[RMDB]
RNA sequence: GGGAACGACUCGAGUAGAGUCGAAAAUUAAGGGAUGUUACUCAUGCCACGAGAAAUUCAAUAUAUAAGAGCUCUCGUCUAUUGCAAGAUAUAAGUUACUGAGCAUGUUAUGUUGGAAAGAUAACAUGCUGUAGUAAUAAUGAAUUGCGGAACGCCUACUGAUUGAUGGCUUCGGCCAUCAAUCAGUAAAAGAAACAACAACAACAAC
Reactivity to 2A3 in 0.01 (KOAc 150mM, MgCl2 10mM, bicine 150mM(pH8.5), 24C), signal-to-noise 1, nucleotides 027 to 156: u120u060a090a050g110g000g000a030u030g040u250u070a090c000u010c140a020u110g100c020c030a030c000g000a000g020a060a090a050u190u110c020a060a040u100a000u060a060u070a250a110g000a020g060c020u040c000u000c020g020u000c070u110a140u060u250g030c020a000a000g040a030u020a020u020a180a100g010u020u000a000c010u020g000a010g010c000a000u020g000u000u000a020u030g130u180u080g060g070a060a070a010g110a060u000a020a040c000a000u000g000c000u000g010u040a000g000u010a000a020u050a020a010u060g000a060a110u000u020g080c010g020g090a090a040c030g000c020c010u000

This 207-nucleotide RNA was probed chemically with 2A3. Conditions: 150 mM KOAc, 10 mM MgCl2 and 150 mM bicine (pH 8.5), 24 C. It was measured as part of the RMDB library ARCHII.